This 177-nucleotide RNA was probed chemically with 2A3 and DMS. Values cover nucleotides 27 to 126. The data come from the RNA Mapping Database (RMDB), library M2PK90. DMS adducts were read by reverse transcription with MarathonRT.
[RMDB]
RNA sequence: GGGAACGACUCGAGUAGAGUCGAAAAGUAAAUAAAGCGCACCAAUAUGGAGGUGCGCAACCACCGUGACCUAGGAACACGCAUCCACGCGUCUCCUAAGACGCGAAAGGUAUUCCAAAUAAAAAAAGGUUAAUAAUGGUUUCGACCAUUAUUAACCAAAAGAAACAACAACAACAAC
Reactivity to 2A3 in 0.01 (KOAc 150mM, MgCl2 10mM, bicine 150mM(pH8.5), 24C), signal-to-noise 3, nucleotides 027 to 126: g030u060a020a090a170u140a080a160a020g010c000g010c000a010c000c000a050a040u210a190u300g180g020a120g000g010u000g000c000g000c010a000a000c000c000a030c000c010g010u020g030a030c010c010u040a040g020g000a030a020c030a000c030g040c030a060u070c050c010a040c070g010c000g000u020c000u030c010c010u030a090a050g010a010c010g000c000g040a090a020a010g000g000u010a050u050u000c000c010a060a120a070u230a090a140a020a020a000a010a010
Reactivity to DMS in 0.01 (KOAc 150mM, MgCl2 10mM, bicine 150mM(pH8.5), 24C), signal-to-noise 2, nucleotides 027 to 126: g000u010a080a110a080u010a090a080a140g000c000g010c000a000c000c010a070a130u000a230u020g020g020a110g030g030u010g020c000g020c000a010a020c030c050a080c110c040g030u000g000a110c050c030u000a070g000g020a010a030c070a020c050g000c110a130u010c130c110a170c080g000c010g000u010c020u000c200c100u000a050a040g000a070c000g000c000g000a010a060a050g000g000u000a060u000u000c010c010a060a060a140u040a030a000a080a130a030a140a120